[RMDB]
RNA sequence: GGGAACGACUCGAGUAGAGUCGAAAAAAGAAGCUGGAUGUGCUUUCAAACGACGUGCUGAAGAACUCACUGUCAUACACAGGAAGAUGCGGAGUUGUGGCAUCUGAGGAAGAGGAGCACCCGUGGCCUUCGGACGUUAAUUCGUUAACGUCCGAAGAAAAGAAACAACAACAACAAC
Reactivity to DMS in 0.01 (KOAc 150mM, MgCl2 10mM, bicine 150mM(pH8.5), 24C), signal-to-noise 1, nucleotides 027 to 126: a120a120g000a110a070g020c010u000g060g000a080u010g030u010g040c030u000u000u010c080a090a140a120c050g050a160c180g020u000g020c060u010g000a110a040g020a060a080c030u000c020a160c100u020g000u000c060a070u010a060c110a090c110a040g010g000a110a110g000a050u010g010c030g020g020a110g010u000u000g020u010g030g000c000a000u020c010u000g010a100g010g020a040a090g010a050g000g010a040g040c040a010c010c060c040g030u010g010g040c120
Notes: Chemical mapping of a 177-nucleotide RNA with DMS. Source: RMDB library OK2TRN, as collected in RNAgym. DMS adducts were read by reverse transcription with MarathonRT. For DMS, 904 sequencing reads were counted. Values are in units of 0.01, from 0 to 300, in steps of 10.